[RMDB]
RNA sequence: GGGAACGACUCGAGUAGAGUCGAAAAAUUUGUCCGAAAACCGUUAUUUCGCUUGUAUGUUCAUUUAAGGCGAUGGUAUGUGAAGGAUACAGAUCAAAACACGGUGUUUGGCCAAACUUGGACAUAAUAUUUAGCAAAAUUUCGAUUUUGCUAAAUAAAAAGAAACAACAACAACAAC
Reactivity to DMS in 0.01 (KOAc 150mM, MgCl2 10mM, bicine 150mM(pH8.5), 24C), signal-to-noise 7, nucleotides 027 to 126: a110u010u000u000g010u000c000c000g000a010a020a060a010c010c010g010u000u010a150u010u010u000c040g020c040u000u000g020u000a040u000g010u010u010c160a090u010u000u000a070a060g010g000c030g010a050u000g000g010u000a020u000g010u000g010a140a110g010g020a110u010a030c020a030g000a070u000c060a040a060a070a090c230a020c010g000g000u000g000u000u000u000g010g000c050c010a020a020a020c090u010u000g000g010a100c100a060u010a070a130
Reactivity to 2A3 in 0.01 (KOAc 150mM, MgCl2 10mM, bicine 150mM(pH8.5), 24C), signal-to-noise 3, nucleotides 027 to 126: a000u030u040u030g020u000c000c000g000a030a020a010a020c000c000g010u020u030a060u060u120u050c010g020c040u070u050g090u130a120u080g150u110u150c120a140u120u120u130a060a020g020g010c020g010a030u040g030g040u050a030u030g050u020g070a090a100g070g020a010u070a150c020a010g080a030u090c040a030a050a040a000c050a000c000g000g010u010g020u080u140u010g030g000c000c020a000a010a050c060u030u070g030g010a020c020a050u120a140a040
An RNA of 177 nucleotides, treated with DMS and 2A3 and read out base by base. Reactivities are rounded to 0.1 and cut off at 0 and 3. For DMS the reverse transcriptase was MarathonRT. Source: RMDB library OK2TST, as collected in RNAgym. For 2A3, 3,620 sequencing reads were counted. The RNA was probed in 150 mM KOAc, 10 mM MgCl2 and 150 mM bicine (pH 8.5) at 24 C. For DMS, 11,900 sequencing reads were counted.